The record gives the reactivity of an RNA of 177 nucleotides to DMS and 2A3.
It was measured as part of the RMDB library TTRINS.
The RNA was probed in 150 mM KOAc, 10 mM MgCl2 and 150 mM bicine (pH 8.5) at 24 C.
The DMS profile rests on 3,996 reads.
RNA sequence: GGGAACGACUCGAGUAGAGUCGAAAAGAUAUGGAUGUUGAACUACUGCCGAUGAGCGAAGAACGAGUCACUUUAUCGGAAACGAUAAAGUGACUCGGGAGCUCUAAGGCAGCAACAUCCUAAGUCAGUGAUUACUUAUGUUCGCAUAAGUAAUCACAAAAGAAACAACAACAACAAC
Reactivity to DMS in 0.01 (KOAc 150mM, MgCl2 10mM, bicine 150mM(pH8.5), 24C), signal-to-noise 4, nucleotides 027 to 126: g000a050u010a300u010g000g030a000u010g000u000u000g010a120a050c070u030a300c010u000g020c030c000g000a300u010g010a000g000c000g020a100a160g020a240a220c040g010a020g000u000c000a020c000u000u000u010a000u000c000g000g000a120a080a170c010g000a000u000a000a000a000g000u000g020a000c000u000c000g020g010g010a110g010c000u000c000u020a100a270g010g000c000a010g000c000a000a010c000a010u000c000c010u000a010a060g010u010c070a150
Reactivity to 2A3 in 0.01 (KOAc 150mM, MgCl2 10mM, bicine 150mM(pH8.5), 24C), signal-to-noise 3, nucleotides 027 to 126: g060a050u110a050u180g020g000a000u010g020u000u020g040a160a100c090u300a040c000u300g020c000c010g060a160u300g010a010g000c020g210a300a060g000a220a060c000g000a000g000u000c010a000c000u050u000u010a000u000c010g060g030a100a030a060c000g010a000u000a000a020a000g000u020g000a000c000u000c000g000g010g000a000g000c000u010c010u010a040a030g000g010c010a000g000c000a000a010c000a010u010c000c000u000a070a010g060u020c080a040